This 207-nucleotide RNA was probed chemically with DMS and 2A3.
High DMS reactivity at an A or C suggests that its Watson-Crick edge is free.
For DMS the reverse transcriptase was MarathonRT.
The 2A3 profile rests on 2,153 reads.
The RNA was probed in 150 mM KOAc, 10 mM MgCl2 and 150 mM bicine (pH 8.5) at 24 C.
RNA sequence: GGGAACGACUCGAGUAGAGUCGAAAAUAUUAGACAUGAUUAAUGGGGACAAAGAAAAGAGAAAAAUAUGGGCUAAAGUAUUAACAAGAAGAACACAAAUAGGAUACCCUUAUAUCUUCUUUCAUGAUAAUGCAAAUAGUAAUACAGUAGAUGUAUAGAAAGAUGCAUAAUUCGUUAUGCAUCUUUCAAAAGAAACAACAACAACAAC
Reactivity to DMS in 0.01 (KOAc 150mM, MgCl2 10mM, bicine 150mM(pH8.5), 24C), signal-to-noise 2, nucleotides 027 to 156: u000a090u010u000a070g000a100c000a070u010g010a160u000u010a070a100u010g020g030g010g010a140c060a010a120a100g010a070a080a090a090g010a150g000a030a140a110a140a100u000a040u000g020g010g030c020u010a090a070a150g020u000a080u000u010a050a130c060a060a130g020a080a050g010a040a060c030a060c090a060a040a080u000a040g000g000a170u010a060c030c030c000u020u020a070u000a120u000c020u000u000c030u010u020u010c080a030u010g010a070u010a070a050u000g000c000a030a070a070u000a060g020u000a060a060u000a020c050a050g030u000a070g010a110u010g020u000a080u000a200
Reactivity to 2A3 in 0.01 (KOAc 150mM, MgCl2 10mM, bicine 150mM(pH8.5), 24C), signal-to-noise 2, nucleotides 027 to 156: u060a000u100u090a030g010a010c010a020u020g030a070u160u160a100a070u090g000g000g000g000a010c010a010a160a020g060a050a090a030a010g080a010g040a030a070a000a060a020u140a080u100g020g000g000c010u020a130a000a000g020u040a090u140u090a070a020c030a030a020g040a000a000g020a040a010c020a000c020a070a110a020u070a010g030g030a030u060a090c000c000c000u030u030a140u020a010u070c000u030u000c000u020u090u060c030a020u040g060a030u040a100a020u080g030c010a000a150a000u050a040g020u110a030a070u060a100c020a010g030u030a030g030a060u050g040u110a060u060a090